[RMDB]
RNA sequence: GGGAACGACUCGAGUAGAGUCGAAAAGAAGUAUGACUCAGAUCUAGAGGGAUAUUUCAAGCAUAGUGCAUCGUAAACCGAAUUGUUUUGAGACCUGUUUGAUUCUGUUAGCAUCUCUUUGUUGAGGUAUAAAGAAGAUAUUCGUAUCUUCUUUAUAAAAAGAAACAACAACAACAAC
Reactivity to 2A3 in 0.01 (KOAc 150mM, MgCl2 10mM, bicine 150mM(pH8.5), 24C), signal-to-noise 5, nucleotides 027 to 126: g060a030a020g040u290a050u060g090a160c000u010c040a020g010a060u020c020u040a030g030a030g070g030g040a050u070a150u170u200u040c020a020a010g000c000a030u040a060g100u130g130c030a050u070c030g090u110a100a080a060c050c010g030a060a060u090u030g050u040u190u050u050g030a030g010a020c000c000u060g070u160u080u050g020a030u180u020c010u010g020u080u030a010g000c010a010u000c020u000c000u010u040u050g060u060u070g060a040g000g080
Reactivity to DMS in 0.01 (KOAc 150mM, MgCl2 10mM, bicine 150mM(pH8.5), 24C), signal-to-noise 9, nucleotides 027 to 126: g000a060a060g020u010a020u000g010a150c050u000c010a040g000a070u010c050u000a060g000a070g000g000g000a100u010a070u010u000u000c010a040a040g000c020a040u000a080g010u010g030c130a070u000c130g000u010a070a100a100c130c030g000a080a110u010u000g010u000u000u000u000g000a060g000a050c030c010u000g000u010u000u000g000a040u010u000c030u000g000u000u000a050g010c040a030u000c020u000c010u000u000u000g010u000u000g000a080g010g010

Conditions: 150 mM KOAc, 10 mM MgCl2 and 150 mM bicine (pH 8.5), 24 C.
Chemical mapping of a 177-nucleotide RNA with 2A3 and DMS.
DMS adducts were read by reverse transcription with MarathonRT.
Source: RMDB library OK2TST, as collected in RNAgym.
For 2A3, 5,991 sequencing reads were counted.
For 2A3 the reverse transcriptase was SuperScript II with manganese.